[RMDB]
RNA sequence: GGGAACGACUCGAGUAGAGUCGAAAAGCAGCAGCCGGCCAGUGCUGCGACCCCUGUGCACGCUCCAGCAGAUCCUGCCAUAAAGCCAAAGUUUAAAUUCAAAUUCAGCGGAACGGCUGCGGCGCUGUGAACUAGUUAGAUUCGUCUAACUAGUUCAAAAAGAAACAACAACAACAAC
Reactivity to 2A3 in 0.01 (KOAc 150mM, MgCl2 10mM, bicine 150mM(pH8.5), 24C), signal-to-noise 6, nucleotides 027 to 126: g020c030a000g000c000a000g070c030c010g060g030c040c010a060g030u040g060c000u010g000c010g010a040c000c000c000c030u070g070u090g050c030a020c080g020c010u000c010c000a020g000c000a000g020a110u070c010c010u030g020c020c010a100u160a090a110a010g000c020c000a080a050a020g010u050u070u190a170a270a170u190u100c080a030a070a130u110u040c020a020g030c010g050g020a050a070c030g030g000c010u020g000c020g020g000c030g000c030u040g040
Reactivity to DMS in 0.01 (KOAc 150mM, MgCl2 10mM, bicine 150mM(pH8.5), 24C), signal-to-noise 9, nucleotides 027 to 126: g010c020a060g010c010a050g010c030c020g010g010c060c070a260g010u000g010c010u000g000c040g000a090c070c010c010c080u000g020u010g010c050a060c060g000c030u000c050c030a080g010c040a060g010a080u010c040c030u010g020c030c050a090u000a060a080a090g000c030c030a050a110a090g010u000u000u010a060a070a120u010u010c100a050a080a130u000u000c080a060g000c040g010g010a090a080c070g000g000c010u000g010c130g000g010c030g010c090u000g010

Record summary:
Structure probing data (2A3 and DMS) for a 177-nucleotide construct. Conditions: 150 mM KOAc, 10 mM MgCl2 and 150 mM bicine (pH 8.5), 24 C. For DMS the reverse transcriptase was MarathonRT. Reactivities are given for positions 27 through 126. The DMS profile rests on 14,592 reads. Source: RMDB library OK2TRN, as collected in RNAgym.